[RMDB]
RNA sequence: GGGAACGACUCGAGUAGAGUCGAAAACAAAAUUCUUCCUGUCGUUGCAGGACGAUCUGAUGCGCAUCUUCGGUUCCGACCGCAUGGACGGCAUGUUGCAGAAACUCGGCCUCAAGGAAGACGAAGAGACGUGAUUUUAGUUCGCUAAAAUCACGUCAAAAGAAACAACAACAACAAC
Reactivity to 2A3 in 0.01 (KOAc 150mM, MgCl2 10mM, bicine 150mM(pH8.5), 24C), signal-to-noise 3, nucleotides 027 to 126: c010a000a090a040a090u090u020c020u010u020c000c010u030g120u150c110g210u080u160g010c110a010g000g000a010c020g000a010u020c020u080g130a020u030g000c030g000c020a040u000c040u120u140c030g120g020u110u100c030c040g080a090c010c040g100c150a150u150g020g040a020c010g020g000c050a010u040g000u050u260g000c010a010g010a030a040a030c030u000c020g020g000c000c000u020c020a020a000g040g010a020a010g050a000c050g070a070a050g070a020
Reactivity to DMS in 0.01 (KOAc 150mM, MgCl2 10mM, bicine 150mM(pH8.5), 24C), signal-to-noise 4, nucleotides 027 to 126: c050a090a090a050a150u000u000c010u000u000c000c010u000g010u000c170g000u020u010g010c180a030g000g010a040c040g000a050u010c060u010g010a270u000g000c020g010c060a060u000c140u000u010c060g010g000u020u000c070c090g000a140c070c070g010c230a070u000g000g000a060c050g000g020c300a040u000g000u000u020g050c040a020g020a130a090a090c150u000c010g010g000c000c000u000c030a080a050g000g000a040a060g010a080c290g000a080a080g010a070